[RMDB]
An RNA of 207 nucleotides, treated with 2A3 and DMS and read out base by base. For DMS the reverse transcriptase was MarathonRT. The 2A3 profile rests on 3,779 reads. The DMS profile rests on 5,864 reads.

RNA sequence: GGGAACGACUCGAGUAGAGUCGAAAACGCGCCUUCGGGCGCGAAAAAACCGUAGGGACGAUGGAACCGCCGUACGAAUCGCAAUUCGAAAGAGUUGCGACUAUACGGAACUACGGUUCGUUGUCCCUAAACGGAAAAAGACUUCUUCGGAAGUCAACAUCCUUUUAAAGUUCGCUUUAAAAGGAUGAAAAGAAACAACAACAACAAC
Reactivity to 2A3 in 0.01 (KOAc 150mM, MgCl2 10mM, bicine 150mM(pH8.5), 24C), signal-to-noise 4, nucleotides 027 to 156: c000g010c000g030c000c010u060u140c270g080g020g040c030g010c020g010a010a010a000a000a010a010c020c010g000u020a020g000g010g000a010c020g010a020u110g220g030a000a000c000c000g010c010c000g000u010a020c090g140a090a210u000c000g000c000a000a010u000u010c010g080a130a070a070g010a050g010u010u000g000c000g000a000c000u000a000u010a010c000g010g080a070a030c100u220a050c040g000g010u000u010c000g000u000u000g000u000c010c000c000u000a010a000a000c010g030g080a060a040a000a050a120g010a010c000u010u010c000u040u080c290g080g000a010a000g000u010c000a000a000
Reactivity to DMS in 0.01 (KOAc 150mM, MgCl2 10mM, bicine 150mM(pH8.5), 24C), signal-to-noise 2, nucleotides 027 to 156: c000g030c000g010c000c000u000u000c300g040g050g000c000g090c000g000a000a000a020a070a030a070c010c000g040u000a060g010g000g000a020c000g020a040u020g030g020a010a070c020c010g020c000c020g050u010a040c010g050a060a000u010c000g030c000a010a020u000u000c000g010a210a140a250g000a050g020u000u000g020c000g020a020c020u000a080u000a040c040g020g020a110a140c060u000a160c000g000g020u000u000c000g000u010u000g010u000c000c000c000u000a010a030a030c010g000g010a020a050a130a120a140g010a040c000u000u000c020u000u010c300g010g010a030a020g000u000c000a040a100